[RMDB]
RNA sequence: GGGAACGACUCGAGUAGAGUCGAAAAGGAUAACCCUUCCCUGUUCCUCCGUUUGGAGGGCAGAUAGAACAUGAUGACUGGAGAUGCAUGAAAUGUGACUAAUGUCUCUGUGUAAUCAGGACUUGCACAUAGGCUACCAGUUCGCUGGUAGCCUAUGAAAAGAAACAACAACAACAAC
Reactivity to DMS in 0.01 (KOAc 150mM, MgCl2 10mM, bicine 150mM(pH8.5), 24C), signal-to-noise 2, nucleotides 027 to 126: g030g020a220u010a120a190c060c000c020u000u000c030c070c020u000g000u010u010c000c000u000c030c000g000u000u010u020g040g070a040g000g000g010c010a000g020a120u000a080g000a090a160c050a070u010g020a030u000g030a080c040u010g000g000a080g000a040u020g000c070a030u000g000a090a070a110u020g010u000g000a100c100u000a100a090u000g010u000c000u010c020u020g000u000g010u010a080a090u000c000a050g020g000a100c080u000u000g040c160a150
Reactivity to 2A3 in 0.01 (KOAc 150mM, MgCl2 10mM, bicine 150mM(pH8.5), 24C), signal-to-noise 2, nucleotides 027 to 126: g010g040a060u100a230a200c030c000c000u000u010c000c000c010u020g000u210u280c000c000u000c010c010g080u190u300u300g020g000a000g000g000g000c000a010g020a030u130a040g040a030a020c030a100u090g010a000u030g040a050c020u030g030g040a040g020a030u090g080c030a000u020g120a180a170a110u230g000u070g010a070c030u080a180a040u220g020u000c000u030c000u030g050u030g050u100a000a050u090c020a010g000g060a000c000u020u070g090c030a010